[RMDB]
RNA sequence: GGGAACGACUCGAGUAGAGUCGAAAAUGGCGGUUGACGGCGACGUUAGGAAGUCCGGAGACGCCGGCGGGGGCCUCGGGAAGAGUUAUCUUUUCUGCUUAACGGCCUGCCAACCCUGGAAUCGGUUAGUAUAAAUGUUGUUCGCAACAUUUAUACUAAAAGAAACAACAACAACAAC
Reactivity to DMS in 0.01 (KOAc 150mM, MgCl2 10mM, bicine 150mM(pH8.5), 24C), signal-to-noise 2, nucleotides 027 to 126: u000g000g010c050g020g000u000u000g000a300c030g010g000c050g000a170c040g000u010u020a140g020g000a170a220g020u010c030c020g020g000a300g010a040c040g020c020c000g020g030c080g000g000g010g010g000c020c020u000c130g000g000g010a040a010g010a020g010u010u030a060u000c010u000u010u000u010c010u010g020c210u020u000a030a100c130g000g010c010c020u010g020c010c010a070a120c010c000c030u000g010g020a100a100u000c030g010g010u010u000
Reactivity to 2A3 in 0.01 (KOAc 150mM, MgCl2 10mM, bicine 150mM(pH8.5), 24C), signal-to-noise 2, nucleotides 027 to 126: u150g010g030c040g020g090u110u050g050a040c020g000g040c060g030a060c060g070u160u110a090g090g110a100a050g050u000c010c010g010g030a020g000a000c040g020c000c000g010g000c000g040g010g030g010g010c000c000u010c030g010g020g040a030a000g000a000g010u220u200a090u180c000u060u030u040u000c010u010g080c000u100u030a050a040c010g010g000c000c000u050g010c000c010a030a080c010c020c060u070g120g080a110a150u060c020g040g000u000u000